[RMDB]
RNA sequence: GGGAACGACUCGAGUAGAGUCGAAAACGUAUUUGCGAUGACUAUGCAUGGUACAUGGAUGGUGACAGAUUUUAUCCGUAUGGUGACAAUGGUGUCAUACCACUUUGUUAUAAGCUUGGUGGUGGUGACAGAGUAACCUUUGGUGAGGAUGAAAUCACACCCUCCUUAUCUUCGGAUAAGGAGGGUGAAAAGAAACAACAACAACAAC
Reactivity to DMS in 0.01 (KOAc 150mM, MgCl2 10mM, bicine 150mM(pH8.5), 24C), signal-to-noise 2, nucleotides 027 to 156: c060g020u010a080u000u000u010g020c040g020a080u000g000a050c050u010a050u000g020c060a120u000g040g030u010a020c080a080u010g010g010a080u010g030g030u000g020a080c130a080g000a050u000u000u000u000a050u000c100c060g040u000a080u000g010g040u010g010a040c040a040a090u000g020g030u020g010u000c030a080u000a040c010c000a010c040u000u000u010g010u000u010a210u010a070a260g000c020u000u000g030g070u000g030g020u030g020g040u010g010a040c010a060g020a170g000u000a080a110c070c030u000u010u000g050g000u000g000a070g000g000a060u000g010a040a040a090u000c050a240
Reactivity to 2A3 in 0.01 (KOAc 150mM, MgCl2 10mM, bicine 150mM(pH8.5), 24C), signal-to-noise 5, nucleotides 027 to 156: c050g040u090a160u060u110u160g050c050g010a020u050g030a030c030u030a040u120g040c070a040u050g010g030u080a040c020a050u080g100g030a030u050g010g030u020g030a030c040a080g010a010u020u040u010u100a050u060c000c030g050u100a050u100g020g000u020g000a030c030a060a050u080g060g010u050g000u040c020a010u010a030c000c000a010c020u050u000u000g020u040u130a240u090a300a050g020c020u010u010g000g000u010g000g000u020g020g030u000g010a000c000a000g040a000g050u050a070a070c030c000u070u080u100g110g010u060g010a020g010g010a010u030g020a030a030a000u040c010a020

This 207-nucleotide RNA was probed chemically with DMS and 2A3. Source: RMDB library OK3TST, as collected in RNAgym. The RNA was probed in 150 mM KOAc, 10 mM MgCl2 and 150 mM bicine (pH 8.5) at 24 C. DMS adducts were read by reverse transcription with MarathonRT.